[RMDB]
RNA sequence: GGGAACGACUCGAGUAGAGUCGAAAACCAUUCCUUAUACCUUGAGUAUUGCUGAAUUCAGUUUAGCCUGCAUGCUCUUGGCUAUUCUCAUAGUGAUUGUCAAAUUUGGAGUUACUUAUUCGUCAAUAAAACACUACCACGUUCGCGUGGUAGUGAACCAUAGGGACAUCUUCGGAUGUCCCUAUGGAAAAGAAACAACAACAACAAC
Reactivity to DMS in 0.01 (KOAc 150mM, MgCl2 10mM, bicine 150mM(pH8.5), 24C), signal-to-noise 1, nucleotides 027 to 156: c010c050a210u000u000c000c040u000u000a220u000a090c000c000u000u000g010a050g010u000a020u000u000g050c040u000g000a080a070u000u010c100a110g000u000u000u000a110g020c050c040u000g050c040a140u000g040c020u000c020u000u000g000g100c020u020a110u000u000c020u000c060a140u000a100g040u000g000a040u000u030g050u010c010a060a070a090u000u000u000g010g010a180g000u000u000a070c070u000u000a150u000u000c070g000u000c050a040a070u000a050a160a090a120c030a050c000u000a010c000c000a040c000g030u000u010c200g030c010g110u000g000g010u000a000g000u000g010a020a080
Reactivity to 2A3 in 0.01 (KOAc 150mM, MgCl2 10mM, bicine 150mM(pH8.5), 24C), signal-to-noise 3, nucleotides 027 to 156: c010c010a030u050u110c000c010u140u150a090u050a130c000c010u000u040g000a000g030u020a050u210u120g040c030u040g050a200a130u270u230c090a140g210u010u070u200a090g050c000c000u020g000c010a040u100g010c010u000c000u060u000g000g020c010u040a060u050u090c060u050c070a040u090a090g090u060g080a120u070u100g050u040c040a000a040a240u110u120u110g040g020a080g060u110u040a080c040u160u110a200u160u080c060g090u080c100a080a200u060a170a020a000a000c000a000c000u000a000c000c000a000c020g020u030u050c270g010c000g070u000g000g000u020a000g000u000g000a000a000